The record gives the reactivity of an RNA of 177 nucleotides to DMS and 2A3.
It was measured as part of the RMDB libraries RFM100 and RFMREP.
For 2A3 the reverse transcriptase was SuperScript II with manganese.
RNA sequence: GGGAACGACUCGAGUAGAGUCGAAAACACAUCGGUCCGGAGUUGAUGGGUUACCCAGUCAUUCUUCUGCUUGCAGGAGAGCCCGGUGUCCUUGUGAUGCCAAACCCGUGUUCCUAACAGAAUACAAUAAGUUGCUAAGUUUCGACUUAGCAACUUAAAAAGAAACAACAACAACAAC
Reactivity to DMS in 0.01 (KOAc 150mM, MgCl2 10mM, bicine 150mM(pH8.5), 24C), signal-to-noise 4, nucleotides 027 to 126: c030a050c040a040u000c120g000g010u010c030c010g000g000a240g020u020u020g000a080u000g020g010g010u010u010a140c070c040c000a130g010u020c100a080u020u000c010u020u000c000u000g010c010u030u020g010c010a020g010g000a010g010a040g010c130c060c010g000g000u020g010u010c000c020u010u010g000u020g000a050u010g010c060c040a040a070a070c040c000c030g020u010g000u000u000c010c010u000a060a140c280a160g010a070a050u030a050c120a060a130
Reactivity to 2A3 in 0.01 (KOAc 150mM, MgCl2 10mM, bicine 150mM(pH8.5), 24C), signal-to-noise 6, nucleotides 027 to 126: c030a000c000a030u040c030g020g020u000c020c010g020g000a140g050u080u110g050a090u020g010g020g040u120u130a140c020c010c010a000g130u070c020a050u100u000c000u010u000c010u010g020c020u090u190g030c020a010g010g030a030g000a010g030c020c000c020g000g010u050g050u060c000c010u040u080g020u100g040a080u070g050c010c020a050a060a100c040c020c010g030u020g010u030u000c010c000u030a050a020c020a070g090a090a020u110a070c070a040a120